[RMDB]
RNA sequence: GGGAACGACUCGAGUAGAGUCGAAAACAACUUCCCUUCGGGGAAGUUGAACCAUUCCCAAAUUCCACCUUGGUGAUGGCACCCGGAGAGGAGCCAACACCACUCCGAGAGCCUUCGGGCUCUCGAACUGGGAAUUUAGAUUCGUCUAAAUUCCCAGAAAAGAAACAACAACAACAAC
Reactivity to DMS in 0.01 (KOAc 150mM, MgCl2 10mM, bicine 150mM(pH8.5), 24C), signal-to-noise 2, nucleotides 027 to 126: c010a010a030c000u000u000c000c000c000u000u010c150g030g000g000g000a010a000g020u010u000g010a050a110c130c100a290u000u000c010c000c010a100a110a150u010u010c100c060a090c170c120u010u000g000g010u000g030a080u000g000g010c020a130c020c000c000g000g030a160g010a180g010g010a040g010c000c000a000a050c010a020c000c010a050c200u010c070c010g020a030g000a010g000c000c000u010u010c190g010g030g000c000u000c000u000c000g010a010a060
Reactivity to 2A3 in 0.01 (KOAc 150mM, MgCl2 10mM, bicine 150mM(pH8.5), 24C), signal-to-noise 1, nucleotides 027 to 126: c000a000a000c000u010u010c000c000c000u000u010c200g050g010g000g000a000a000g000u000u010g000a000a010c040c000a040u010u010c000c000c000a020a060a030u140u030c070c040a110c070c050u060u110g020g000u010g010a050u010g000g000c010a050c040c070c120g300g230a210g080a300g180g010a020g020c000c010a000a000c000a000c000c000a000c040u030c030c010g000a000g010a000g030c010c000u030u060c230g060g020g000c000u000c010u000c000g000a000a000